RNA sequence: GGGAACGACUCGAGUAGAGUCGAAAAACCUGUUGGCACCACAGACAGUUGCUCUGCUGUGCCUGUGGCCUCGGGGCAAAGAGAAAGUGGCGAUUUCUACACUCAGUGCUCGGGAACCAGUGGGCACUGCUGAGCGCACAUUCGUGUGCGCUCAGCAAAAAGAAACAACAACAACAAC
Reactivity to DMS in 0.01 (KOAc 150mM, MgCl2 10mM, bicine 150mM(pH8.5), 24C), signal-to-noise 1, nucleotides 027 to 126: a040c010c000u000g000u000u030g000g020c020a100c040c010a070c000a000g030a060c120a060g000u040u000g000c030u130c020u000g000c080u000g010u020g030c040c080u040g000u040g070g030c070c030u030c060g000g000g090g030c050a090a070a000g000a090g000a020a120a040g010u000g010g010c300g000a110u030u040u030c010u000a100c030a090c050u040c000a030g000u000g050c000u000c000g050g000g040a120a140c160c060a050g030u000g010g010g040c030a030c010
Reactivity to 2A3 in 0.01 (KOAc 150mM, MgCl2 10mM, bicine 150mM(pH8.5), 24C), signal-to-noise 2, nucleotides 027 to 126: a000c000c000u010g060u060u120g000g000c040a020c000c060a000c030a000g060a010c000a020g030u100u070g040c000u020c020u100g050c060u000g030u040g020c020c000u030g030u070g020g000c020c010u010c030g000g010g060g020c060a050a010a000g130a040g050a120a130a000g040u030g000g000c090g030a070u100u050u000c010u000a010c030a000c010u040c000a040g000u010g000c000u000c000g000g100g010a040a110c020c000a030g100u130g000g010g000c020a000c050

The record gives the reactivity of an RNA of 177 nucleotides to DMS and 2A3. Conditions: 150 mM KOAc, 10 mM MgCl2 and 150 mM bicine (pH 8.5), 24 C. Source: RMDB library RFM100, as collected in RNAgym.